[RMDB]
RNA sequence: GGGAACGACUCGAGUAGAGUCGAAAACAUCAAUCGGUGACGAUUGAUGACUUGUCCGCUACGGCGGACAAGACUGCUUCUACGGAAGCAGAACUGACAUCGUUCGCGAUGUCAGAAGAGCUUACUUCGGUAAGCUCAAUUGAAAAAAUAAAAUACAAGUAAACGGCCUUACUACGGUAAGGCCGAACAGAAUAUCUACGGAUAUUCUGAACGCUAUGGCUACGGCCAUAGCGAAACCGUCUCUCCCGACGUUAAAGGGAUGUAAAACCGGAGAAUUCGUUCUCCGGAAAAGAAACAACAACAACAAC
Reactivity to 2A3 in 0.01 (KOAc 150mM, MgCl2 10mM, bicine 150mM(pH8.5), 24C), signal-to-noise 2, nucleotides 027 to 266: c000a020u000c000a000a010u010c000g020g030u120g060a020c010g000a010u010u010g000a000u000g010a000c000u000u000g000u000c010c000g050c040u010a030c300g170g000c010g000g010a000c000a010a000g000a000c020u000g010c000u010u010c000u010a140c200g130g000a020a000g030c000a000g000a070a030c010u010g000a000c020a000u000c000g040u040u050c150g020c010g090a000u000g000u000c000a000g000a050a040g040a000g010c010u000u000a000c010u020u120c200g090g000u000a000a000g010c000u000c000a000a030u020u020g000a040a000a020a060a090a050u240a120a130a110a020u300a100c070a070a040g140u230a300a160a030c030g000g010c000c000u020u000a000c010u000a010c140g060g000u010a000a000g010g050c000c000g000a020a010c010a000g000a000a000u010a000u000c000u010a070c300g050g010a020u020a000u000u020c010u000g040a100a000c010g000c000u000a000u010g020g000c000u030a020c260g170g000c000c000a000u000a000g000c010g000a000a000a000c050c000g010u000c040u010c010u020c010c000c000g010a010c000g010u000u000a040a000a020g000g010g010a000u060g050u120a060a120a000a000